RNA sequence: GGGAACGACUCGAGUAGAGUCGAAAACAAACGAUCGACGUAGAAACGCAGACGGCCCGUGACGUUGACGGGCGGCGAAACGUACACUUGGCACUCGGACGAUAGCCGUUCGUACUUUUUCACCGUCGUCACGGCCUCUUCGCGCGUCUUGCACGCCAUAAUUUAGAAUUUUCGAAUUCUAAAUUAUAAAAGAAACAACAACAACAAC
Reactivity to DMS in 0.01 (KOAc 150mM, MgCl2 10mM, bicine 150mM(pH8.5), 24C), signal-to-noise 5, nucleotides 027 to 156: c060a080a110a120c060g020a130u010c020g020a050c000g020u000a110g020a050a060a030c030g010c020a080g010a130c200g020g050c050c020c020g010u000g010a030c030g010u000u000g010a080c050g030g000g020c000g010g030c010g010a060a090a090c300g020u000a050c020a090c090u000u000g030g020c050a140c120u000c050g000g000a080c050g010a130u000a290g020c020c010g010u000u000c020g020u010a070c090u000u010u000u000u010c060a110c140c050g000u010c010g020u000c010a030c010g010g000c020c010u000c010u000u000c050g000c040g020c020g010u000c020u010u010g020c050a050c000g000c000c040
Reactivity to 2A3 in 0.01 (KOAc 150mM, MgCl2 10mM, bicine 150mM(pH8.5), 24C), signal-to-noise 9, nucleotides 027 to 156: c040a010a090a010c060g080a110u150c070g020a020c010g020u080a100g120a130a200a010c020g000c020a010g010a050c110g050g000c060c100c010g000u000g000a000c020g060u060u180g060a010c020g010g020g000c000g010g000c020g010a070a040a020c010g010u060a030c070a030c090u130u150g090g000c060a060c120u070c090g080g030a030c020g050a070u060a030g000c010c000g010u020u010c020g010u050a160c000u080u150u020u100u140c090a080c060c050g090u070c010g000u000c000a000c000g000g010c000c000u000c000u020u030c010g010c010g000c000g010u000c000u040u160g060c080a040c070g060c030c010